An RNA of 207 nucleotides, treated with 2A3 and read out base by base.
The reactions ran in a buffer of 150 mM KOAc, 10 mM MgCl2 and 150 mM bicine (pH 8.5), at 24 C.
For 2A3, 822 sequencing reads were counted.
Reactivities are given for positions 27 through 156.
Reactivities are rounded to 0.1 and cut off at 0 and 3.

RNA sequence: GGGAACGACUCGAGUAGAGUCGAAAAACCGAUCUUUCGAGAUCGGUAAAAAAGCGUACUACUUAUCCGUGCAUCUCCCCACCCUCGUCCCAAAUAGGACGAGGAGGAUGAACUACACGGUAAGUAUCGCAAAAACGCGGGUAUUCGUACCCGCGAAGUUACGACACGGAUUCGUCCGUGUCGUAACAAAAGAAACAACAACAACAAC
Reactivity to 2A3 in 0.01 (KOAc 150mM, MgCl2 10mM, bicine 150mM(pH8.5), 24C), signal-to-noise 1, nucleotides 027 to 156: a010c020c000g000a030u040c020u060u150u150c210g070a010g000a000u000c010g000g000u040a000a000a050a020a000a000g070c060g020u120a080c070u000a000c000u010u050a030u150c120c020g010u000g000c020a040u000c020u010c010c020c030c000a080c000c000c000u000c010g000u000c000c000c000a100a300a210u100a030g000g000a000c000g000a000g000g000a010g000g010a000u110g000a030a050c020u120a020c230a010c000g000g000u000a000a000g010u010a010u250c130g000c030a090a090a000a000a000c060g020c050g020g000g010u000a070u010u150c200g070u020a070c000c000c000g000c000g000a010a000